[RMDB]
RNA sequence: GGGAACGACUCGAGUAGAGUCGAAAAGAACGGCAGAGAGCCGAGAAAUGAGACGAGGUAGAGUGCGCGCUCUACCAAAAGCUGUGUGUAAAAACGCACGUGUAGGCGCGGCUACACAACUCAAGAAGAUUAUAGCUACCUUCGGGUAGCUAUAAUCAAAAGAAACAACAACAACAAC
Reactivity to 2A3 in 0.01 (KOAc 150mM, MgCl2 10mM, bicine 150mM(pH8.5), 24C), signal-to-noise 6, nucleotides 027 to 126: g040a080a020c000g010g000c050a020g120a020g030a030g300c010c010g010a030g040a030a160a040u180g010a040g040a050c110g020a080g060g040u070a030g000a030g080u210g140c040g000c000g010c020u110c000u040a010c000c010a000a080a000a010g070c130u050g000u000g000u000g010u060a000a000a010a110a030c010g020c010a010c040g060u110g010u060a010g000g000c020g000c000g030g010c010u090a020c030a000c010a030a080c000u010c040a020a050g070a070a010
Reactivity to DMS in 0.01 (KOAc 150mM, MgCl2 10mM, bicine 150mM(pH8.5), 24C), signal-to-noise 4, nucleotides 027 to 126: g010a100a070c030g000g000c020a200g030a150g020a240g000c020c010g000a120g000a100a070a080u000g010a050g010a100c300g000a170g000g010u010a020g000a050g020u030g020c020g010c030g000c020u100c000u010a000c000c090a030a040a100a070g010c170u000g020u000g000u000g000u000a060a070a090a140a060c030g000c000a000c040g010u050g000u010a030g010g010c010g000c040g000g000c020u000a010c010a020c020a100a230c010u000c020a050a080g000a080a100

The record gives the reactivity of an RNA of 177 nucleotides to 2A3 and DMS. Reactivities are given for positions 27 through 126. Conditions: 150 mM KOAc, 10 mM MgCl2 and 150 mM bicine (pH 8.5), 24 C. DMS adducts were read by reverse transcription with MarathonRT. It was measured as part of the RMDB library OK1LIB.